[RMDB]
RNA sequence: GGGAACGACUCGAGUAGAGUCGAAAAGAUAUGGACAGUAUUUCUCGAUAAGAAUAUGGUCGGAAACGACCAUCAUUCUUUUGACGAGAGGAUACUGUCCUAAGUCAAACACUCCUUCGGGAGUGAACGCUUAAUUCAUCUUCGGAUGAAUUAAGCGAAAAGAAACAACAACAACAAC
Reactivity to DMS in 0.01 (KOAc 150mM, MgCl2 10mM, bicine 150mM(pH8.5), 24C), signal-to-noise 2, nucleotides 027 to 126: g020a060u000a300u000g000g020a020c000a000g000u010a010u000u000u010c020u010c000g020a170u000a000a010g000a010a000u000a000u000g010g010u000c000g010g000a130a080a230c000g020a010c000c000a000u000c170a000u000u000c000u000u000u020u010g000a190c170g000a040g010a020g000g000a000u000a000c000u010g020u000c000c000u000a000a090g040u000c020a140a130a300c010a010c000u010c000c000u000u010c270g050g030g010a010g020u000g000a040a100
Reactivity to 2A3 in 0.01 (KOAc 150mM, MgCl2 10mM, bicine 150mM(pH8.5), 24C), signal-to-noise 1, nucleotides 027 to 126: g010a020u080a050u140g010g000a000c000a020g010u010a020u010u110u060c020u000c010g120a170u060a230a030g000a010a000u000a010u010g020g000u010c010g000g010a080a060a020c020g000a000c040c000a000u000c010a000u010u000c010u000u070u000u150g250a110c070g030a020g000a020g130g000a010u000a000c000u010g000u000c000c000u010a020a000g000u000c000a000a050a030c010a000c020u020c000c000u070u080c300g150g000g000a020g020u010g030a080a040